[RMDB]
RNA sequence: GGGAACGACUCGAGUAGAGUCGAAAAGACUGUCACAAAGGAAUGAAAGAGCCUAACAGCCUGGCCUGCCACAGGUUUCUCAGACACUUGGGAUAGCUGGCAUAUGGUGUUGGGGUGAGAGACCAGCCUCACUCGUACCGUUCGCGGUACGAGUGAGAAAAGAAACAACAACAACAAC
Reactivity to DMS in 0.01 (KOAc 150mM, MgCl2 10mM, bicine 150mM(pH8.5), 24C), signal-to-noise 1, nucleotides 027 to 126: g030a130c050u000g020u010c090a080c120a050a100a040g000g030a110a080u000g000a070a080a120g020a300g010c040c010u020a170a140c060a100g000c010c000u020g000g020c020c040u000g030c050c100a040c070a030g010g000u000u000u010c040u000c070a100g000a140c100a060c030u000u000g040g000g030a110u010a050g010c040u000g000g010c040a070u000a090u000g010g000u000g000u000u000g000g000g010g010u000g000a070g010a090g020a080c030c030a090g020c100